[RMDB]
RNA sequence: GGGAACGACUCGAGUAGAGUCGAAAAUUGCCGGUCAGAUCAGGCCACAGGAUCUGACUGGGACAUGCUCUGUGGCUGGGCCUGUCGGCGACUUGUCUGCGUGAGCGCCGGGGCCGAGGAGAACGCUGAGCAGACUGCGCCCGGAGAAGCCCUGCUGGAUUGUCAGGUAGUUCGCUACCUGACAAUCAAAAGAAACAACAACAACAAC
Reactivity to 2A3 in 0.01 (KOAc 150mM, MgCl2 10mM, bicine 150mM(pH8.5), 24C), signal-to-noise 1, nucleotides 027 to 156: u130u090g020c000c000g010g000u030c000a000g010a000u000c000a010g020g020c000c000a000c000a020g010g000a010u020c000u000g010a000c000u010g000g040g050a090c100a140u190g060c130u090c060u090g020u000g000g000c000u000g040g000g000c010c000u100g040u070c000g000g000c000g020a080c020u040u110g010u000c010u000g010c000g010u030g040a020g020c010g000c000c000g010g000g010g000c000c000g010a000g000g010a010g000a010a010c030g010c150u200g050a020g020c000a000g000a000c000u010g020c000g000c020c020c010g060g030a040g030a110a050g030c000c040c000u040g020c010u080g030

Record summary:
This 207-nucleotide RNA was probed chemically with 2A3. The 2A3 profile rests on 1,266 reads.